[RMDB]
Structure probing data (DMS and 2A3) for a 177-nucleotide construct. For 2A3, 1,344 sequencing reads were counted. Values cover nucleotides 27 to 126. The RNA was probed in 150 mM KOAc, 10 mM MgCl2 and 150 mM bicine (pH 8.5) at 24 C. 2A3 adducts were read by reverse transcription with SuperScript II with manganese. For DMS the reverse transcriptase was MarathonRT. The DMS profile rests on 961 reads. The data come from the RNA Mapping Database (RMDB), library OK2TRN.
RNA sequence: GGGAACGACUCGAGUAGAGUCGAAAACAACGAUGGCGAGGGCGCCUUCCAUGGAGACGCAGGUGAGUUCCUCACGCCACGUGCGUGGGCACACCUGCACGGGGGAGGAAAACCAUAGACGAGUAGGCCAGCGUAUUCGUUUCGACGAAUACGCUGGAAAAGAAACAACAACAACAAC
Reactivity to DMS in 0.01 (KOAc 150mM, MgCl2 10mM, bicine 150mM(pH8.5), 24C), signal-to-noise 1, nucleotides 027 to 126: c070a060a130c150g030a070u000g000g060c060g010a100g010g000g040c150g020c020c000u030u050c020c080a130u010g000g010a050g020a180c140g000c010a000g000g030u000g000a150g040u000u000c220c010u080c030a010c020g030c000c000a100c280g020u010g040c000g050u000g000g010g000c220a120c010a020c010c000u000g000c000a000c020g000g020g000g000g030a060g010g010a080a050a050a120c070c050a050u000a030g000a100c050g010a070g020u000a070g000g000
Reactivity to 2A3 in 0.01 (KOAc 150mM, MgCl2 10mM, bicine 150mM(pH8.5), 24C), signal-to-noise 2, nucleotides 027 to 126: c040a000a020c050g070a060u080g050g000c050g040a040g040g060g050c040g030c020c010u030u020c030c000a080u140g090g010a300g010a060c120g010c010a010g000g030u000g020a160g070u150u200c000c000u060c000a010c010g010c000c010a300c210g090u230g010c010g000u030g020g000g000c040a010c000a000c030c000u020g000c010a000c000g020g000g010g000g000a030g020g000a000a100a060a000c000c010a030u020a060g070a020c060g000a040g070u090a070g090g090